[RMDB]
RNA sequence: GGGAACGACUCGAGUAGAGUCGAAAAGGCGCAGUGGCUCACGCUUGUAAUCCCAGCACUUUGGGAGACUGAGGCUGGUGGAUUACUUGAGGUCAGGAGUUCCAGACCAGCCUGGGCAACAUGGUGAAGUAGCUAUCCUAUUCGUAGGAUAGCUACUAAAAGAAACAACAACAACAAC
Reactivity to 2A3 in 0.01 (KOAc 150mM, MgCl2 10mM, bicine 150mM(pH8.5), 24C), signal-to-noise 4, nucleotides 027 to 126: g070g000c050g000c070a030g040u030g080g000c020u010c030a050c020g030c030u020u040g020u040a030a020u020c000c000c000a010g020c070a120c080u080u130u090g020g030g010a090g040a050c020u030g040a010g040g000c010u030g000g080u040g060g020a020u020u050a040c000u020u070g090a060g040g050u060c020a040g020g070a050g050u190u030c020c010a030g020a040c000c010a000g000c000c010u020g000g010g000c030a050a020c010a070u090g050g000u040g060a070
Reactivity to DMS in 0.01 (KOAc 150mM, MgCl2 10mM, bicine 150mM(pH8.5), 24C), signal-to-noise 6, nucleotides 027 to 126: g000g010c040g020c110a080g010u000g010g020c020u000c040a070c130g020c020u020u000g010u000a060a070u000c000c000c010a060g010c050a070c050u000u000u000g020g010g000a170g010a130c040u000g010a030g010g000c010u000g000g000u000g000g000a030u000u000a040c020u000u000g010a100g020g010u000c040a070g010g000a150g000u000u000c020c040a120g000a070c020c000a040g000c020c010u000g000g000g000c040a060a040c050a050u010g000g010u000g000a110